The record gives the reactivity of an RNA of 177 nucleotides to DMS and 2A3. For 2A3 the reverse transcriptase was SuperScript II with manganese. The 2A3 profile rests on 3,605 reads.
RNA sequence: GGGAACGACUCGAGUAGAGUCGAAAAAGAUCGUCCGCAUCCUUUCUUGCCUGCACCCACUUUUCGAGGAUGUCUUCCCUUCCUCCCCUCCGGGAUUUCUUCUGAUCGGACUGGCUCAUCCUCGGAAGAUCAUUUGUUAGUUCGCUAACAAAUGAUCAAAAGAAACAACAACAACAAC
Reactivity to DMS in 0.01 (KOAc 150mM, MgCl2 10mM, bicine 150mM(pH8.5), 24C), signal-to-noise 3, nucleotides 027 to 126: a090g020a080u000c080g010u000c010c030g030c070a070u000c020c040u000u010u000c050u000u000g000c040c020u000g010c090a140c030c010c010a090c130u010u000u000u000c030g000a030g000g000a030u000g010u000c070u010u000c020c010c010u000u000c020c020u010c010c010c020c030u000c040c030g010g020g010a100u000u010u000c060u000u010c090u000g020a090u000c060g020g010a070c070u000g010g010c070u000c040a080u000c010c010u000c030g010g000a060a060
Reactivity to 2A3 in 0.01 (KOAc 150mM, MgCl2 10mM, bicine 150mM(pH8.5), 24C), signal-to-noise 2, nucleotides 027 to 126: a000g030a080u050c030g030u010c030c020g030c040a050u050c010c010u080u100u020c010u030u080g040c000c010u010g000c030a060c010c030c010a070c060u050u060u040u060c030g000a010g030g010a020u040g020u030c060u020u020c000c000c000u010u020c020c000u030c010c010c010c010u030c010c010g040g010g010a030u040u050u030c030u080u010c020u040g010a040u050c020g010g010a030c040u020g030g000c000u000c010a010u040c000c000u000c010g010g000a010a030